[RMDB]
RNA sequence: GGGAACGACUCGAGUAGAGUCGAAAACCAAUGGGAAACCAUUGGCAACUCGGAAACGAGUUGAACGCGGAAUUAGCUAUAAAACGCGCGACAAUGCGAUUUUAAGCAUUGUCGAUUACGCCCAUGUCGAUUUUAAGACAUGGAGCGAAUAUAGCAAGGAUCGAGGAGCGUUCGCGCUCUUUGAUCCAAAAGAAACAACAACAACAAC
Reactivity to 2A3 in 0.01 (KOAc 150mM, MgCl2 10mM, bicine 150mM(pH8.5), 24C), signal-to-noise 1, nucleotides 027 to 156: c000c000a000a000u000g000g000g010a030a020a000c000c000a010u010u000g000g000c000a000a010c000u000c000g020g010a040a030a030c010g000a000g000u000u010g020a070a020c010g000c000g000g020a080a080u070u020a080g020c000u000a000u000a000a020a020a020c010g000c000g000c000g000a000c000a000a000u000g010c020g060a120u010u080u050u250a100a000g000c010a000u000u000g000u000c010g000a000u000u020a080c010g000c000c000c000a000u000g000u000c010g040a060u040u110u060u300a130a020g000a000c000a000u000g000g000a030g000c000g000a010a040u140a010u000a000g000c080a120a300
Chemical mapping of a 207-nucleotide RNA with 2A3. For 2A3, 2,151 sequencing reads were counted. 2A3 adducts were read by reverse transcription with SuperScript II with manganese.